[RMDB]
RNA sequence: GGGAACGACUCGAGUAGAGUCGAAAAAACUCUUGCCCCGACGUUCACUCCACGCGCUAAUUCCCGGGGGCCCCACAGCCCCCACACUCCCUCUCGGCCCGAGGCUCUGAAGGGCACAACCAGGGCUUAAUGAAUGAUCAUUCGUGAUCAUUCAUUAAAAAGAAACAACAACAACAAC
Reactivity to 2A3 in 0.01 (KOAc 150mM, MgCl2 10mM, bicine 150mM(pH8.5), 24C), signal-to-noise 5, nucleotides 027 to 126: a000a000c050u060c030u040u080g030c000c000c010c000g030a030c010g040u050u060c030a040c100u000c020c030a040c040g030c000g010c020u050a060a060u040u030c000c010c000g010g000g010g000g000c000c010c020c010a100c020a020g010c000c010c010c010c000a000c000a000c010u030c000c000c000u020c000u010c020g030g000c000c020c010g020a060g030g000c010u010c010u040g050a080a070g030g010g000c030a020c000a050a030c020c010a020g000g030g000c000u000
Reactivity to DMS in 0.01 (KOAc 150mM, MgCl2 10mM, bicine 150mM(pH8.5), 24C), signal-to-noise 6, nucleotides 027 to 126: a070a050c060u010c030u020u000g000c030c010c010c020g010a110c100g010u010u010c040a100c020u010c020c030a070c040g010c060g020c050u010a060a150u010u000c000c000c000g020g010g010g000g000c030c020c050c170a080c200a210g000c020c000c000c000c000a040c110a040c080u010c030c010c010u000c020u010c060g000g000c010c020c040g010a090g010g010c020u000c020u010g010a120a120g010g000g010c040a040c110a060a090c110c040a110g000g000g000c040u000
Record summary:
The record gives the reactivity of an RNA of 177 nucleotides to 2A3 and DMS. The reactions ran in a buffer of 150 mM KOAc, 10 mM MgCl2 and 150 mM bicine (pH 8.5), at 24 C. Source: RMDB libraries RFM100 and RFMREP, as collected in RNAgym. For 2A3 the reverse transcriptase was SuperScript II with manganese.